[RMDB]
RNA sequence: GGGAACGACUCGAGUAGAGUCGAAAAGAUAUGGAUCCCGUAGACCGAUAAGUGUCUGUCGGAAACGACAGUACACUUUUGACGGUUGAAGGGAUCCUAAGUCAAAAGUGUGGCUUCGGCCACACAAGCCGUCUAAUAUGUUCGCAUAUUAGACGGCAAAAGAAACAACAACAACAAC
Reactivity to DMS in 0.01 (KOAc 150mM, MgCl2 10mM, bicine 150mM(pH8.5), 24C), signal-to-noise 4, nucleotides 027 to 126: g010a060u010a300u000g020g010a010u000c000c000c000g000u000a300g020a000c000c000g010a210u010a020a000g030u000g000u010c000u000g000u000c000g010g000a120a100a180c000g010a010c000a000g000u000a000c000a010c000u000u010u000u000g000a170c150g000g000u000u000g000a230a300g000g000g000a010u000c000c000u000a000a080g000u000c040a110a110a110a130g000u000g020u000g000g000c000u000u010c250g020g000c010c000a000c010a000c000a070a140
Reactivity to 2A3 in 0.01 (KOAc 150mM, MgCl2 10mM, bicine 150mM(pH8.5), 24C), signal-to-noise 2, nucleotides 027 to 126: g020a010u030a000u150g000g010a020u000c000c000c010g030u050a000g000a000c010c080g080a120u060a180a020g010u000g000u000c000u000g000u020c010g000g010a040a080a050c000g000a000c010a000g030u160a020c010a020c000u000u010u010u070g070a040c000g000g000u000u000g030a020a020g010g030g000a000u010c000c010u000a000a000g020u010c020a000a020a130a240g000u000g000u000g000g000c020u060u130c300g180g030c000c000a000c010a000c000a010a010